[RMDB]
RNA sequence: GGGAACGACUCGAGUAGAGUCGAAAAUAUUAAAGCAGUCUUCUGUGACACCUCGGGAAAACCUCCACACAUUUAUCAGGCCGAUGUUUCCGACACAGUAGUGAGCCACUCUCGAGCAACAGUUAGUCCAAGGUAGAGGACACUUCAGUACAGGCUCUCUAUAAUGGCGUUUCGACGCCAUUAUAGAAAAAGAAACAACAACAACAAC
Reactivity to DMS in 0.01 (KOAc 150mM, MgCl2 10mM, bicine 150mM(pH8.5), 24C), signal-to-noise 1, nucleotides 027 to 156: u000a030u000u000a040a070a080g030c040a070g010u000c000u030u000c070u000g050u010g020a160c070a060c080c000u020c000g000g000g000a100a110a090a130c030c010u010c010c070a050c060a110c060a080u000u000u000a090u000c080a110g000g000c050c050g010a070u010g000u000u010u000c040c020g040a080c040a020c090a170g010u030a120g050u000g020a080g010c010c030a110c130u000c020u000c010g020a080g000c020a080a100c040a180g000u000u020a070g030u010c000c020a070a110g040g040u000a130g020a050g020g010a020c000a040c050u000u000c010a050g010u000a050c040a120g040g000c010u000c060
Reactivity to 2A3 in 0.01 (KOAc 150mM, MgCl2 10mM, bicine 150mM(pH8.5), 24C), signal-to-noise 2, nucleotides 027 to 156: u140a010u030u220a090a050a030g020c060a020g040u070c020u030u080c040u160g020u020g060a030c050a070c040c020u010c020g010g020g000a030a150a070a090c030c000u050c040c000a020c010a000c010a100u100u140u270a150u190c060a020g000g000c010c010g050a040u110g050u010u070u010c010c020g020a010c020a000c000a050g120u130a040g020u040g110a020g020c010c000a070c020u020c010u010c070g060a020g060c010a000a080c010a060g100u180u210a010g020u030c050c050a060a090g030g020u120a100g070a040g070g010a000c010a000c040u070u050c040a020g020u080a020c040a130g000g000c010u030c000

Notes:
An RNA of 207 nucleotides, treated with DMS and 2A3 and read out base by base. The DMS profile rests on 1,621 reads. Reactivities are given for positions 27 through 156. 2A3 adducts were read by reverse transcription with SuperScript II with manganese. It was measured as part of the RMDB library OK3TST. DMS adducts were read by reverse transcription with MarathonRT. In probing experiments dimethyl sulfate is read out at A N1 and C N3, which are open when not base-paired.